[RMDB]
RNA sequence: GGGAACGACUCGAGUAGAGUCGAAAAUUGGUCGGGUCGAAAUCCACCCAGCCGUUCUCCGGGCAAUACAGCGAGACCCAGGCAUGCGAGGCGUCGGCACCGAUCAGUCGCGCCUGUCCGGGCGGCAGGCGCGGAGCUAUUUCGAUAGCUCCGCGCCAAAAGAAACAACAACAACAAC
Reactivity to DMS in 0.01 (KOAc 150mM, MgCl2 10mM, bicine 150mM(pH8.5), 24C), signal-to-noise 2, nucleotides 027 to 126: u010u010g010g000u000c020g010g010g000u000c020g000a030a140a080u020c040c030a180c030c010c020a090g020c010c000g010u000u000c040u020c020c090g000g010g010c040a120a030u000a060c100a110g010c110g020a090g000a120c060c030c080a110g010g010c040a080u000g040c110g000a130g030g020c300g030u010c060g030g050c020a090c070c020g000a040u010c040a070g040u000c070g020c070g000c000c020u000g020u000c010c010g020g010g000c030g020g010c040a070
Reactivity to 2A3 in 0.01 (KOAc 150mM, MgCl2 10mM, bicine 150mM(pH8.5), 24C), signal-to-noise 1, nucleotides 027 to 126: u050u060g000g050u030c000g040g000g000u060c040g070a020a020a050u070c060c000a040c000c010c000a020g000c020c000g050u080u040c040u000c010c000g030g050g030c030a070a110u080a120c040a070g040c000g050a050g020a090c010c030c030a070g000g100c030a080u110g010c040g010a020g070g000c020g030u090c080g070g010c080a100c080c030g000a050u020c040a010g000u010c010g000c000g070c050c020u060g000u070c010c040g080g000g050c040g020g050c050a010
Chemical mapping of a 177-nucleotide RNA with DMS and 2A3. The RNA was probed in 150 mM KOAc, 10 mM MgCl2 and 150 mM bicine (pH 8.5) at 24 C.